This 177-nucleotide RNA was probed chemically with DMS and 2A3. The RNA was probed in 150 mM KOAc, 10 mM MgCl2 and 150 mM bicine (pH 8.5) at 24 C. For DMS, 3,144 sequencing reads were counted.
[RMDB]
RNA sequence: GGGAACGACUCGAGUAGAGUCGAAAAGCUCGCCGACCAUCUGCGCGAAAUCGGUUGGGAGGCUGGUACGGCCGCACCCGACGAGAUCCCAGCGUUGGUGGCUGCGGAUUCUCGCGAGACGUGGCGCGGCCUAUUUUGCAUUCGUGCAAAAUAGGCCAAAAGAAACAACAACAACAAC
Reactivity to DMS in 0.01 (KOAc 150mM, MgCl2 10mM, bicine 150mM(pH8.5), 24C), signal-to-noise 3, nucleotides 027 to 126: g010c020u000c300g020c010c000g020a290c020c010a040u000c020u000g020c080g030c130g020a060a160a130u010c010g000g000u000u010g010g000g020a300g010g010c030u000g030g010u000a090c160g000g020c010c000g020c040a050c010c010c000g000a180c010g000a030g000a050u000c000c000c010a020g010c010g020u000u010g010g010u020g010g010c010u000g000c160g030g000a040u010u010c010u000c000g010c070g010a050g000a090c160g010u000g010g020c000g020c100
Reactivity to 2A3 in 0.01 (KOAc 150mM, MgCl2 10mM, bicine 150mM(pH8.5), 24C), signal-to-noise 3, nucleotides 027 to 126: g040c020u010c010g010c010c010g030a040c000c000a030u030c040u160g020c040g030c040g110a080a120a110u180c050g020g020u010u010g000g000g020a040g020g030c040u030g010g090u120a130c100g070g010c030c010g000c020a020c010c020c000g060a140c000g010a030g000a000u000c000c000c000a000g000c030g050u090u300g220g230u210g150g000c000u010g000c090g000g020a000u150u040c000u000c000g010c020g020a030g020a050c070g050u090g000g020c010g020c040
For 2A3, 3,482 sequencing reads were counted. For 2A3 the reverse transcriptase was SuperScript II with manganese.